[RMDB]
RNA sequence: GGGAACGACUCGAGUAGAGUCGAAAAGACGCUGCAGGCGGCCGCGACGUGGCGGGUGUUUAGCCUGCACCGGACCAACCUGCCCGAGACGGGCGCGCAGUGGCGGAUUCAGGUGAGCAACGGCGGAACAUGAGAAGGGGUUCGCCCCUUCUCAUGUAAAAGAAACAACAACAACAAC
Reactivity to DMS in 0.01 (KOAc 150mM, MgCl2 10mM, bicine 150mM(pH8.5), 24C), signal-to-noise 4, nucleotides 027 to 126: g010a160c050g030c170u010g010c020a080g000g030c020g020g010c030c010g010c030g000a240c160g020u020g020g030c010g010g010g020u000g010u000u000u000a190g010c010c000u010g030c060a030c120c040g010g000a090c060c070a140a090c040c030u000g010c000c010c000g010a110g010a190c080g010g020g000c000g020c090g030c050a060g020u010g000g000c020g000g000a110u000u000c060a080g000g020u000g000a070g010c030a080a060c060g000g010c060g020g000a100
Reactivity to 2A3 in 0.01 (KOAc 150mM, MgCl2 10mM, bicine 150mM(pH8.5), 24C), signal-to-noise 1, nucleotides 027 to 126: g040a020c020g000c040u040g000c030a070g000g010c020g100g020c030c040g060c030g050a210c130g060u110g100g010c020g000g030g020u060g100u030u180u070a020g020c010c000u040g030c050a010c000c010g010g030a030c040c000a010a020c030c000u030g000c000c050c010g020a050g040a060c040g000g060g010c030g010c010g000c010a030g010u050g040g020c030g030g000a040u090u090c050a000g040g080u040g030a040g000c020a020a010c020g050g020c020g070g050a040